[RMDB]
RNA sequence: GGGAACGACUCGAGUAGAGUCGAAAAAAAAGAUAUGGACUGUGAACUACAGCGUAAAGUGGAGCGAUGAAAGCGUUCGGAAACGAACGCUGGAGCUCCAUAUACGCUGCACAGUCCUAAGUCAAAACAAUGUACAAAUCUUCGGAUUUGUACAUUGAAAAGAAACAACAACAACAAC
Reactivity to 2A3 in 0.01 (KOAc 150mM, MgCl2 10mM, bicine 150mM(pH8.5), 24C), signal-to-noise 1, nucleotides 027 to 126: a010a010a030a000g060a080u120a050u070g000g010a020c000u000g020u020g010a100a050c070u170a110c300a010g000c000g030u000a050a140a090g130u020g050g000a020g000c030g150a300u080g040a040a030a000g010c020g010u000u020c000g000g000a050a130a080c010g000a000a000c000g020c000u000g000g020a000g030c020u010c010c020a000u010a030u000a010c000g000c020u000g000c000a000c000a010g000u000c000c000u000a010a010g000u000c000a020a000a070a110
Reactivity to DMS in 0.01 (KOAc 150mM, MgCl2 10mM, bicine 150mM(pH8.5), 24C), signal-to-noise 5, nucleotides 027 to 126: a050a040a080a080g000a050u000a300u000g000g010a010c000u010g020u000g010a110a050c090u010a300c010a000g000c000g010u000a010a110a160g040u000g000g010a020g010c000g020a110u010g000a130a150a040g000c000g020u000u000c010g030g000a130a070a150c010g010a000a000c000g010c000u000g000g000a040g000c010u000c000c010a000u000a030u000a010c000g010c000u000g000c000a010c000a010g000u000c000c000u010a010a040g000u000c020a110a100a080a180